[RMDB]
RNA sequence: GGGAACGACUCGAGUAGAGUCGAAAAGUUGCGUCGGCAGCAUAGAGAAUGACCCGAAGUGUUUUUCUUUCCGGCGACUGGCCUCCAUGACAGCAUCAGAAACUCUCCUGCCAAAAUGAGGAUCGUUACGAAUUUCAUCGAGACGGUCAUUCAAGACGGAUUAAAGAAGAUUCGUCUUCUUUAAUCCAAAAGAAACAACAACAACAAC
Reactivity to DMS in 0.01 (KOAc 150mM, MgCl2 10mM, bicine 150mM(pH8.5), 24C), signal-to-noise 2, nucleotides 027 to 156: g020u000u010g000c060g000u020c070g010g010c080a050g010c080a140u010a070g020a130g000a130a070u020g020a110c030c000c040g000a160a200g030u000g000u000u010u000u000u010c060u000u000u000c090c040g000g040c010g030a090c040u000g030g010c000c020u000c020c040a100u000g030a080c040a070g010c020a230u000c050a070g000a090a050a150c040u000c000u000c040c030u000g000c050c010a090a020a040a110u010g000a070g030g020a020u000c000g020u020u030a240c070g020a030a180u000u000u000c120a080u010c080g010a300g000a040c000g000g020u000c010a100u000u000c040a010a090g000a190c110
Reactivity to 2A3 in 0.01 (KOAc 150mM, MgCl2 10mM, bicine 150mM(pH8.5), 24C), signal-to-noise 3, nucleotides 027 to 156: g040u050u020g030c000g040u030c040g060g000c030a040g000c040a110u160a070g100a000g060a070a160u100g040a050c010c080c080g060a170a140g040u050g030u140u080u010u060u090c020u030u090u020c060c030g010g000c020g080a040c070u030g030g020c000c000u000c060c010a020u040g020a050c020a080g060c020a050u040c000a040g160a110a080a050c050u000c000u020c050c010u040g050c010c000a100a140a060a090u120g010a030g030g000a020u020c010g000u000u020a070c050g020a040a090u110u190u170c070a100u090c040g010a030g020a070c000g020g000u010c020a040u090u060c030a000a030g080a020c190

An RNA of 207 nucleotides, treated with DMS and 2A3 and read out base by base.
For 2A3 the reverse transcriptase was SuperScript II with manganese.
Conditions: 150 mM KOAc, 10 mM MgCl2 and 150 mM bicine (pH 8.5), 24 C.
Source: RMDB library OK3TST, as collected in RNAgym.